Source: RMDB library M2RFPK, as collected in RNAgym. The record gives the reactivity of an RNA of 207 nucleotides to DMS and 2A3. The RNA was probed in 150 mM KOAc, 10 mM MgCl2 and 150 mM bicine (pH 8.5) at 24 C. The DMS profile rests on 1,548 reads.
RNA sequence: GGGAACGACUCGAGUAGAGUCGAAAAAAGGAAUUAGCGUGCCUUCAUGCUAAGGGUUUGAUAUCUGCUAAAACCCGGUGCAUUCAUCAAUGCAGGUUAAGCCAAAGGGAUGUCCCGACCGGAAGCCAAAAGUUCGCUACGUUCGCGUAGCGAACAACUAUGUCGUACGGUUCGCCGUACGACAUAGAAAAGAAACAACAACAACAAC
Reactivity to DMS in 0.01 (KOAc 150mM, MgCl2 10mM, bicine 150mM(pH8.5), 24C), signal-to-noise 1, nucleotides 027 to 156: a050a040g010g010a100a080u020u000a020g020c030g030u010g000c060c020u000u000c100a040u000g000c030u010a220a230g010g010g020u000u010u000g000a130u000a110u000c060u010g030c040u000a130a020a010a040c010c000c020g030g060u000g090c020a030u000u050c030a090u010c140a120a200u000g040c030a170g040g020u010u000a060a100g060c000c010a010a120a120g000g030g000a200u000g020u000c000c000c060g010a130c030c050g040g000a180a080g000c030c090a120a040a100a130g000u010u000c000g030c000u000a000c010g000u000u020c300g030c030g070u000a030g030c000g040a020a010c000a020a040
Reactivity to 2A3 in 0.01 (KOAc 150mM, MgCl2 10mM, bicine 150mM(pH8.5), 24C), signal-to-noise 2, nucleotides 027 to 156: a020a000g100g020a080a090u070u070a030g020c030g020u030g040c050c030u100u130c030a070u100g000c000u030a030a020g010g010g030u020u000u020g020a020u030a060u020c070u080g020c040u080a010a030a030a060c000c000c000g000g020u070g030c040a090u070u120c010a030u060c070a140a030u170g030c000a010g040g030u050u100a090a020g010c030c030a090a000a010g030g040g000a030u070g010u070c010c000c000g010a000c010c010g010g020a000a000g010c010c010a000a120a090a000g010u000u000c000g000c000u000a020c000g080u010u060c220g000c010g110u000a000g020c000g000a000a000c020a000a000